Structure probing data (DMS and 2A3) for a 177-nucleotide construct. The reactions ran in a buffer of 150 mM KOAc, 10 mM MgCl2 and 150 mM bicine (pH 8.5), at 24 C. The data come from the RNA Mapping Database (RMDB), library M2PK50. For 2A3, 32,320 sequencing reads were counted. For 2A3 the reverse transcriptase was SuperScript II with manganese.
RNA sequence: GGGAACGACUCGAGUAGAGUCGAAAACAUGGAUCGUUCGCGAUCCAUGGCAGGUGGUGGUGGGACCAGCCGACCCAGGCUUUUGGCAUCGCAGCCUUUCCAAUCCAGCCUAUUUCGAUAGGCUGAAGUUAUUAUCUCUAUUCGUAGAGAUAAUAACAAAAGAAACAACAACAACAAC
Reactivity to DMS in 0.01 (KOAc 150mM, MgCl2 10mM, bicine 150mM(pH8.5), 24C), signal-to-noise 9, nucleotides 027 to 126: c010a010u000g000g000a000u000c000g020u000u020c210g030c010g010a010u000c000c000a000u000g000g010c150a050g010g020u000g010g030u010g010g020u000g000g000g000a120c080c080a070g010c020c020g000a110c090c070c080a150g000g010c030u000u000u000u000g010g010c030a030u000c110g000c090a120g010c010c020u000u000u000c020c020a110a140u010c120c000a010g010c000c000u000a010u000u000u010c150g010a020u000a010g000g010c000u000g000a020a060
Reactivity to 2A3 in 0.01 (KOAc 150mM, MgCl2 10mM, bicine 150mM(pH8.5), 24C), signal-to-noise 9, nucleotides 027 to 126: c010a010u000g000g000a000u010c020g010u100u060c240g000c010g100a000u000c010c000a000u000g000g010c050a020g010g050u080g020g030u030g000g040u050g020g060g040a050c020c020a010g010c010c020g070a140c020c040c030a030g040g020c000u110u110u140u200g040g000c010a020u050c050g010c060a030g010c000c010u020u030u020c020c010a020a060u040c040c000a000g010c000c000u010a020u010u120u080c200g070a010u000a000g000g000c000u000g000a010a010